[RMDB]
RNA sequence: GGGAACGACUCGAGUAGAGUCGAAAACCUUCCUCACAGCAACACCAGUAGGAAGAGCAUUUCCAAGGACAGUGCAGGGAAGGCCACCCGGCACCACAUGCACAGCACGUUGCGUUGUGGGAGGGAAGCGCUGAGUUUAGGGAAAUAGAAUCCUUGAGAUAAUAGGGGAUUUCGAUCCCCUAUUAUCAAAAGAAACAACAACAACAAC
Reactivity to 2A3 in 0.01 (KOAc 150mM, MgCl2 10mM, bicine 150mM(pH8.5), 24C), signal-to-noise 4, nucleotides 027 to 156: c000c000u000u020c010c000u070c020a100c020a070g040c030a020a040c020a030c050c020a030g070u110a070g080g020a030a020g070a030g070c060a120u060u070u040c040c020a050a070g040g000a030c050a090g020u010g020c010a010g000g010g030a090a030g080g000c030c000a050c010c030c010g000g060c040a050c030c000a030c000a040u010g010c020a000c010a060g110c090a030c120g050u080u040g010c020g050u060u060g010u030g000g020g000a040g010g000g020a050a020g030c050g000c080u060g060a030g080u080u070u080a070g020g010g040a030a070a080u120a080g080a030a070u100c000c010u020u020g010a010
Reactivity to DMS in 0.01 (KOAc 150mM, MgCl2 10mM, bicine 150mM(pH8.5), 24C), signal-to-noise 3, nucleotides 027 to 156: c000c000u000u000c020c000u000c130a160c090a120g020c030a080a070c010a210c060c030a220g030u000a100g010g010a050a060g030a220g010c110a140u000u000u000c020c010a110a170g020g010a100c070a090g030u000g020c000a050g010g000g020a120a050g000g000c060c010a140c020c010c070g020g000c010a080c000c020a080c070a140u000g030c000a040c060a150g020c110a120c180g010u000u020g010c000g000u000u010g040u000g000g030g020a130g000g020g030a050a080g020c090g030c030u030g010a100g010u000u000u000a090g010g010g000a060a090a150u000a150g000a100a160u010c020c000u010u010g010a300

Chemical mapping of a 207-nucleotide RNA with 2A3 and DMS. Conditions: 150 mM KOAc, 10 mM MgCl2 and 150 mM bicine (pH 8.5), 24 C. 2A3 adducts were read by reverse transcription with SuperScript II with manganese. Source: RMDB library OK3TST, as collected in RNAgym.